[RMDB]
RNA sequence: GGGAACGACUCGAGUAGAGUCGAAAAACACUGAUAGAGGUUUAUUAGUACCUGUAGUGAAACAUGCUGAUCGUAAGUCUAUUUUCCAAAUUUCAGAUGAAAUUAAUGAAUUAGCUGUUAAAGCACGUCCCUUAAGUGGGUUCGCCCACUUAAGGGAAAAAGAAACAACAACAACAAC
Reactivity to DMS in 0.01 (KOAc 150mM, MgCl2 10mM, bicine 150mM(pH8.5), 24C), signal-to-noise 1, nucleotides 027 to 126: a170c030a040c040u020g010a210u000a010g010a040g000g000u000u000u030a090u010u000a110g030u010a010c010c020u000g020u000a010g000u010g000a090a090a140c010a040u010g010c000u000g000a160u010c020g020u010a010a010g030u010c020u000a030u000u000u010u010c050c150a050a030a030u000u010u000c010a240g010a100u000g000a010a040a070u000u000a120a050u020g020a080a020u000u000a040g000c000u010g000u000u000a060a140a030g010c020a050c190g020
Reactivity to 2A3 in 0.01 (KOAc 150mM, MgCl2 10mM, bicine 150mM(pH8.5), 24C), signal-to-noise 1, nucleotides 027 to 126: a000c000a010c000u010g010a100u130a200g170a020g030g080u090u100u080a210u120u150a150g090u030a030c000c000u000g070u140a060g010u020g000a130a040a000c010a080u100g000c000u010g000a050u050c030g040u080a020a000g010u010c030u050a090u060u000u000u000c000c000a080a100a000u010u000u030c090a140g150a300u220g100a200a010a100u100u180a030a080u000g020a000a060u040u010a060g000c010u010g010u140u060a060a100a000g000c020a010c030g050

The record gives the reactivity of an RNA of 177 nucleotides to DMS and 2A3. The reactions ran in a buffer of 150 mM KOAc, 10 mM MgCl2 and 150 mM bicine (pH 8.5), at 24 C. For 2A3 the reverse transcriptase was SuperScript II with manganese.